An RNA of 177 nucleotides, treated with DMS and read out base by base. The RNA was probed in 150 mM KOAc, 10 mM MgCl2 and 150 mM bicine (pH 8.5) at 24 C. For DMS, 2,635 sequencing reads were counted. It was measured as part of the RMDB library TTRINS.
RNA sequence: GGGAACGACUCGAGUAGAGUCGAAAAGAUAUGGAAUAAUGGAAAAGUGUUCGAAUCUCGAUAAGAUGGAUUCGGAAACGAAUCACAUCUUUUGACGAGACGAACACUUUUCCAUUAUUCCUAAGUCCAUAUUAGGACCCUUCGGGGUCCUAAUAUGAAAAGAAACAACAACAACAAC
Reactivity to DMS in 0.01 (KOAc 150mM, MgCl2 10mM, bicine 150mM(pH8.5), 24C), signal-to-noise 2, nucleotides 027 to 126: g000a080u000a300u010g000g000a010a020u000a000a020u010g000g000a010a010a000a010g020u000g000u000u000c010g000a180a170u010c000u000c000g020a250u020a000a020g020a020u000g010g000a030u000u000c000g020g000a080a060a150c000g020a000a000u000c000a110c000a000u000c000u000u010u000u000g000a220c080g010a010g000a110c000g000a000a000c000a010c010u000u000u000u000c000c010a000u000u000a000u000u000c000c000u000a010a070g000u000c040